[RMDB]
The record gives the reactivity of an RNA of 207 nucleotides to 2A3. It was measured as part of the RMDB library M2RFPK. Reactivities are given for positions 27 through 156. Conditions: 150 mM KOAc, 10 mM MgCl2 and 150 mM bicine (pH 8.5), 24 C.
RNA sequence: GGGAACGACUCGAGUAGAGUCGAAAAGCAAAUAUUGUCUUAAGUACUUAGGCUAAAAGAAAUAAGUAUUAAAGCGGGACAAGGCAUCGACAUUUGAUACAAAUAUUGAUCAAUGGAUGUCUUAUUUAAACCUCAUCCGGCUUCGGCCGGAUGAGAACCCUUACAAAAGGUUCGCCUUUUGUAAGGGAAAAGAAACAACAACAACAAC
Reactivity to 2A3 in 0.01 (KOAc 150mM, MgCl2 10mM, bicine 150mM(pH8.5), 24C), signal-to-noise 1, nucleotides 027 to 156: g020c000a000a110a190u230a100u100u060g040u000c020u080u090a150a010g000u000a020c010u050u060a000g050g000c020u160a080a040a040a180g130a020a140a070u060a060a010g010u020a020u050u170a180a070a030g100c100g000g030g020a040c030a050a010g000g020c000a000u000c020g180a100c020a030u070u080u180g020a030u170a070c090a130a200a020u250a200u190u080g030a000u010c000a000a000u000g020g000a000u000g000u000c000u000u020a060u010u020u060a040a040a000c000c000u000c000a000u000c000c010g040g000c000u030u020c090g070g040c000c000g000g000a000u000g000a000g000a000a000